An RNA of 207 nucleotides, treated with 2A3 and DMS and read out base by base.
The DMS profile rests on 12,031 reads.
The RNA was probed in 150 mM KOAc, 10 mM MgCl2 and 150 mM bicine (pH 8.5) at 24 C.
2A3 adducts were read by reverse transcription with SuperScript II with manganese.
Reactivities are rounded to 0.1 and cut off at 0 and 3.

[RMDB]
RNA sequence: GGGAACGACUCGAGUAGAGUCGAAAAGUGCCGGCAAUACAGUGUGUAUGAAGGUCUCAAUGGCUCGGAAGUGCCAGCAAACCGGCGUAGAUAUUAGCAGACGUAUGGGCGUAAGACUUUUAUUGAAAAAAGUACAUAAGCUUCGGCUUAUGUACAACAAAUAUGGAAUCUUCGGAUUCCAUAUUUGAAAAGAAACAACAACAACAAC
Reactivity to 2A3 in 0.01 (KOAc 150mM, MgCl2 10mM, bicine 150mM(pH8.5), 24C), signal-to-noise 5, nucleotides 027 to 156: g080u040g000c010c000g010g020c040a040a030u070a080c070a070g130u040g020u020g020u240a050u120g050a050a030g040g040u010c020u010c040a070a120u110g020g000c040u050c110g060g020a110a030g030u020g060c020c010a040g010c080a030a060a060c020c010g000g000c000g020u030a040g020a070u080a040u130u120a030g030c020a020g010a070c020g070u110a080u140g030g080g030c020g030u050a040a000g020a020c000u030u060u100u100a130u120u170g040a070a060a030a020a010a010g000u000a000c000a000u010a010a000g010c010u040u070c220g020g000c000u020u000a000u000g000u000a000c000a000a010
Reactivity to DMS in 0.01 (KOAc 150mM, MgCl2 10mM, bicine 150mM(pH8.5), 24C), signal-to-noise 4, nucleotides 027 to 156: g020u000g010c000c010g010g030c040a080a110u000a070c040a120g020u010g020u000g020u000a080u000g020a140a090g010g010u000c020u010c060a070a140u000g010g030c020u010c050g010g010a150a160g010u000g000c020c010a090g000c030a040a150a080c030c010g010g010c030g010u000a080g000a110u000a070u000u000a080g030c040a150g000a070c030g010u000a070u010g020g020g020c020g000u000a080a100g000a100c040u000u000u000u000a090u000u020g000a010a060a080a140a080a130g000u000a010c000a010u000a000a020g000c010u000u000c300g060g000c000u000u000a010u010g000u000a000c000a050a080